[RMDB]
RNA sequence: GGGAACGACUCGAGUAGAGUCGAAAAAAUGUAUUGUUUGCUAUGACCAUGCCUAAGACUUGUUUCGGACCCAUAGUCCGAAAGAUCUUUGUUGAUGGCGUGCCAUUUGUAGUAUCUUGUGGUUAUCAAACAGGUUUCUUCGGAAACCUGAAAAGAAACAACAACAACAAC
Reactivity to 2A3 in 0.01 (KOAc 150mM, MgCl2 10mM, bicine 150mM(pH8.5), 24C), signal-to-noise 3, nucleotides 027 to 129: a000a000u270g020u140a120u100u130g060u040u070u020g010c000u030a010u000g060a030c020c020a000u060g000c000c020u010a020a010g050a010c000u050u190g060u120u010u000c000g000g000a030c000c040c090a210u240a010g000u000c000c000g030a000a000a000g040a030u030c020u200u190u140g000u010u040g020a060u070g020g020c010g000u030g000c000c000a000u000u020u020g030u020a040g020u000a010u140c020u050u060g000u030g020g040u000u030a100u290c050a020a010a010